[RMDB]
RNA sequence: GGGAACGACUCGAGUAGAGUCGAAAAAGGCCUCCGACUGGUUACGACCAGUCGGAGGACAAGGAGGUCAGGGUCAGGAGCCCCCCCCUGAACCCAGGAUAACCCUCAAAGUCGGGGGGCAACCCAAAGGAGCGAUGAAGUUUCGACUUCAUCGCAACAUACAUGGUUACUUCGGUAACCAUGUAUGAAAAGAAACAACAACAACAAC
Reactivity to 2A3 in 0.01 (KOAc 150mM, MgCl2 10mM, bicine 150mM(pH8.5), 24C), signal-to-noise 1, nucleotides 027 to 156: a000g120g000c000c020u010c000c000g000a000c000u020g000g000u060u070a130c240g030a020c070c030a010g010u000c000g020g000a000g000g020a000c000a000a050g120g010a050g020g020u130c130a090g040g000g000u000c000a010g000g020a010g010c010c000c000c000c000c020c010c000u010g030a150a110c000c010c000a010g020g040a120u090a110a080c000c020c010u040c080a100a080a000g210u120c060g000g010g010g010g020g010c000a000a040c010c030c040a040a090a060g220g000a090g050c020g000a000u000g000a000a000g020u010u100u300c250g110a040c000u000u000c020a000u000c000g000c000a000a000

Source information: This 207-nucleotide RNA was probed chemically with 2A3. Reactivities are given for positions 27 through 156. The reactions ran in a buffer of 150 mM KOAc, 10 mM MgCl2 and 150 mM bicine (pH 8.5), at 24 C. It was measured as part of the RMDB library M2RFPK. The 2A3 profile rests on 690 reads.